RNA sequence: GGGAACGACUCGAGUAGAGUCGAAAAAAACAGCUGUGGUCAGGUGGGCGAGCAGAGGUCAGUGGCCCCAGGUCCCUGGAACGCCUCUUCUCACGGCCACUCCACGGGUGCCUGGCCCUGCGGCCACGCGGAGCUAUCCUUGGCUCCAGCCUCAAAGGUUCCUUACUCUUUUCGAAGAGUAAGGAACAAAAGAAACAACAACAACAAC
Reactivity to 2A3 in 0.01 (KOAc 150mM, MgCl2 10mM, bicine 150mM(pH8.5), 24C), signal-to-noise 1, nucleotides 027 to 156: a000a000a000c070a020g020c010u030g010u030g010g050u020c020a030g030g060u090g070g070g030c040g020a040g010c070a040g010a000g000g030u060c040a000g000u040g030g000c020c030c010c000a020g000g010u000c010c000c000u020g000g020a060a010c100g000c030c010u070c040u190u060c090u040c030a080c050g020g000c020c090a060c030u000c010c030a040c070g010g000g020u140g010c000c000u020g010g010c070c020c000u180g050c080g000g000c000c000a010c010g000c050g000g010a000g020c000u030a080u230c000c030u070u070g020g000c000u000c010c010a000g000c010c000u020c020a090a110a030g110
Structure probing data (2A3) for a 207-nucleotide construct.
The RNA was probed in 150 mM KOAc, 10 mM MgCl2 and 150 mM bicine (pH 8.5) at 24 C.
For 2A3, 1,038 sequencing reads were counted.
2A3 adducts were read by reverse transcription with SuperScript II with manganese.
Values are in units of 0.01, from 0 to 300, in steps of 10.